[RMDB]
RNA sequence: GGGAACGACUCGAGUAGAGUCGAAAAGAAAGAAAGAAAGAAUUCUGACAGAAUGACGGAUUCGAUCGUUGUGGUCGGCGGGCCACCACGUCAUUCCUUCGCACUGUCUCCGGGCAGACCGCCAUAAAAAAGCGGAUCUACUUCGGUAGAUCCGCAACUAUGGACUGACGUUCGCGUCAGUCCAUAGAAAAGAAACAACAACAACAAC
Reactivity to 2A3 in 0.01 (KOAc 150mM, MgCl2 10mM, bicine 150mM(pH8.5), 24C), signal-to-noise 2, nucleotides 027 to 156: g090a010a110a000g050a040a130a050g060a060a040a010g040a050a070u100u000c030u070g060a090c050a050g090a140a200u120g050a040c060g010g040a010u050u090c060g030a050u140c020g000u010u000g000u020g020g010u040c070g070g050c040g030g020g020c000c000a000c000c020a000c000g040u040c030a020u030u010c000c000u070u070c040g100c050a080c030u020g000u010c000u030c060c070g040g000g000c000a010g000a080c030c020g010c000c010a060u230a020a130a020a020a020a000g000c010g010g000a000u020c000u010a030c010u060u040c160g050g000u000a000g000a000u000c000c000g010c000a000a020

The record gives the reactivity of an RNA of 207 nucleotides to 2A3. The reactions ran in a buffer of 150 mM KOAc, 10 mM MgCl2 and 150 mM bicine (pH 8.5), at 24 C. The data come from the RNA Mapping Database (RMDB), library M2RFPK.